Chemical mapping of a 177-nucleotide RNA with 2A3 and DMS. For DMS, 1,326 sequencing reads were counted. The 2A3 profile rests on 3,064 reads. The reactions ran in a buffer of 150 mM KOAc, 10 mM MgCl2 and 150 mM bicine (pH 8.5), at 24 C. 2A3 adducts were read by reverse transcription with SuperScript II with manganese.

RNA sequence: GGGAACGACUCGAGUAGAGUCGAAAAGAUAUGGAGUGGUCAGGAGGGAGCUCAGAAUUCGGAAACGAAUUGUGAGCGACGAUCUCCUGAGCCACUCCUAAGUCAAACGGUGGCUUCGGCCACCGAAGACAGAAUGCUAGUUCGCUAGCAUUCUGUCAAAAGAAACAACAACAACAAC
Reactivity to 2A3 in 0.01 (KOAc 150mM, MgCl2 10mM, bicine 150mM(pH8.5), 24C), signal-to-noise 1, nucleotides 027 to 126: g040a020u080a040u180g000g000a010g010u020g000g000u040c010a000g040g000a020g010g030g010a010g020c000u010c000a020g080a020a000u030u000c000g030g040a030a100a090c020g010a000a020u050u140g300u000g150a010g020c000g000a080c020g000a010u010c000u010c000c000u000g010a010g010c000c000a000c000u000c000c000u020a030a000g010u010c000a030a020a070c050g020g000u020g000g000c000u080u090c300g140g020c010c000a000c000c000g000a000a000
Reactivity to DMS in 0.01 (KOAc 150mM, MgCl2 10mM, bicine 150mM(pH8.5), 24C), signal-to-noise 1, nucleotides 027 to 126: g020a020u020a300u000g000g000a010g030u000g000g010u000c000a020g010g030a010g020g000g010a030g040c000u000c000a010g030a040a010u000u000c000g000g020a170a050a200c000g000a010a000u010u000g000u000g000a020g050c000g000a020c280g000a030u010c000u000c000c030u000g000a050g000c000c000a000c000u010c000c000u010a000a080g000u000c050a090a130a280c040g000g000u000g000g000c000u000u000c240g030g000c000c000a020c020c010g020a020a030